[RMDB]
RNA sequence: GGGAACGACUCGAGUAGAGUCGAAAACGGGCAUACCGGGGUCUCAGAUUCCCGUAAAACACUGAAUUCAAAUAGUCGCAAACGACGAAACUUACGCUUUAGCCGCUUAAGGCUAGCCGUUGCAGCAGUCGGUCAAUGGGCUGUGUGGCGAAAGCCAGUUAUCCCCUAUCUUCGGAUAGGGGAUAACAAAAGAAACAACAACAACAAC
Reactivity to 2A3 in 0.01 (KOAc 150mM, MgCl2 10mM, bicine 150mM(pH8.5), 24C), signal-to-noise 3, nucleotides 027 to 156: c030g020g020g020c020a030u050a150c060c000g000g000g010g000u040c040u000c030a010g000a080u120u130c010c000c010g040u090a020a020a000a010c040a010c020u020g020a060a040u180u120c060a130a060a080u070a080g010u000c020g050c190a110a130a170c040g000a000c000g000a070a030a000c040u090u080a060c060g010c020u110u090u050a010g000c010c020g090c160u180u180a130a020g000g000c000u000a000g000c000c010g040u030u050g000c030a020g000c010a010g050u020c020g060g030u040c020a030a120u110g010g040g000c010u030g020u010g020u030g030g010c000g010a070a010a000g000c010c000a000
Reactivity to DMS in 0.01 (KOAc 150mM, MgCl2 10mM, bicine 150mM(pH8.5), 24C), signal-to-noise 1, nucleotides 027 to 156: c090g020g000g060c060a080u000a030c100c040g030g020g060g000u000c020u010c050a070g000a180u010u000c000c000c010g030u010a070a040a110a090c110a130c040u000g010a090a170u000u020c050a090a120a120u010a010g060u000c020g000c080a050a060a090c010g000a030c040g000a060a050a020c080u010u020a110c220g010c020u000u000u000a140g000c000c010g040c090u000u000a030a080g010g020c040u010a040g020c090c050g000u010u000g030c000a090g000c040a090g050u070c050g050g020u000c120a120a060u000g000g000g030c000u000g010u000g030u000g000g050c010g020a040a060a210g020c000c000a030

Source: RMDB library ARCHII, as collected in RNAgym. An RNA of 207 nucleotides, treated with 2A3 and DMS and read out base by base. The RNA was probed in 150 mM KOAc, 10 mM MgCl2 and 150 mM bicine (pH 8.5) at 24 C. For DMS the reverse transcriptase was MarathonRT. 2A3 adducts were read by reverse transcription with SuperScript II with manganese.